[RMDB]
RNA sequence: GGGAACGACUCGAGUAGAGUCGAAAAUCACGCGAUUGAUAGCCUACGCUAUGGACUUGGAGACCAUAUCGUUCAGCGUGGCAGUGGAAUGCUAAUCCGUCGCAGGCGGUAAAAAUAAAGCCCUCAUCUGAGGGCUUGUUUCAUUUAAUCAACGCUCGGAGCGAUGAAUUUUCGAAUUCAUCGCUCCAAAAGAAACAACAACAACAAC
Reactivity to 2A3 in 0.01 (KOAc 150mM, MgCl2 10mM, bicine 150mM(pH8.5), 24C), signal-to-noise 1, nucleotides 027 to 156: u030c020a040c090g060c010g130a230u010u010g000a000u020a020g030c000c020u140a000c020g000c010u070a110u200g010g000a030c000u090u050g100g010a050g050a100c040c040a080u040a020u220c020g000u030u040c050a020g030c010g020u000g030g010c000a000g000u040g010g000a030a000u030g020c020u060a180a000u020c020c020g050u010c030g000c200a060g030g010c000g020g020u100a050a050a000a000a070u120a010a020a020g000c020c040c010u020c020a300u070c170u170g000a010g000g000g010c020u000u070g000u000u000u000c000a000u030u080u110a120a030u100c020a000a050c010g000c040u080c090
Structure probing data (2A3) for a 207-nucleotide construct. Values cover nucleotides 27 to 156. The RNA was probed in 150 mM KOAc, 10 mM MgCl2 and 150 mM bicine (pH 8.5) at 24 C. The 2A3 profile rests on 491 reads. Reactivities are rounded to 0.1 and cut off at 0 and 3. It was measured as part of the RMDB library OK3TST.